The record gives the reactivity of an RNA of 207 nucleotides to DMS and 2A3. For 2A3 the reverse transcriptase was SuperScript II with manganese. The data come from the RNA Mapping Database (RMDB), library RNAMAK.
[RMDB]
RNA sequence: GGGAACGACUCGAGUAGAGUCGAAAAAAACUGUUCGCAGUUUCACUAGGGGUCGUACCAUACCACGAGGAUCGGUGAACUACUUCUGAAGCCUCCACGGAAGCACCGGGAGUGGUUAAGUACGACGGAGGCACCCAUCGCCCACCUUCGGGUGGAAUAAUUCACUGAGUUUCGACUCAGUGAAUUAAAAAGAAACAACAACAACAAC
Reactivity to DMS in 0.01 (KOAc 150mM, MgCl2 10mM, bicine 150mM(pH8.5), 24C), signal-to-noise 1, nucleotides 027 to 156: a030a000a020c000u000g000u010u000c150g050c120a080g030u010u000u000c030a200c090u020a120g000g010g030g040u000c000g000u000a020c010c000a180u000a040c010c030a040c040g000a170g030g000a090u000c020g000g000u020g000a150a120c090u000a300c000u000u000c000u000g010a070a080g030c020c000u000c010c010a300c000g040g000a040a020g000c040a020c000c020g040g010g000a070g040u030g000g000u000u000a000a080g000u010a030c000g040a060c030g010g070a020g030g020c050a070c040c010c000a200u000c050g000c040c010c000a000c010c040u000u010c270g080g020g000u000g020g010a070a130
Reactivity to 2A3 in 0.01 (KOAc 150mM, MgCl2 10mM, bicine 150mM(pH8.5), 24C), signal-to-noise 3, nucleotides 027 to 156: a000a000a010c060u070g020u060u090c240g020c030a020g020u040u030u040c130a160c200u210a110g000g030g000g040u020c000g010u010a000c000c030a020u080a040c000c000a000c000g030a280g060g000a000u000c000g000g000u030g010a080a100c090u170a090c020u300u000c000u030g020a040a020g000c000c000u000c000c010a010c010g000g000a000a010g040c000a000c000c010g010g000g000a010g000u010g000g000u020u010a080a000g000u000a000c010g040a000c040g010g000a000g000g000c000a020c000c010c010a050u150c040g080c010c000c010a020c010c020u050u120c280g130g000g000u000g000g020a020a100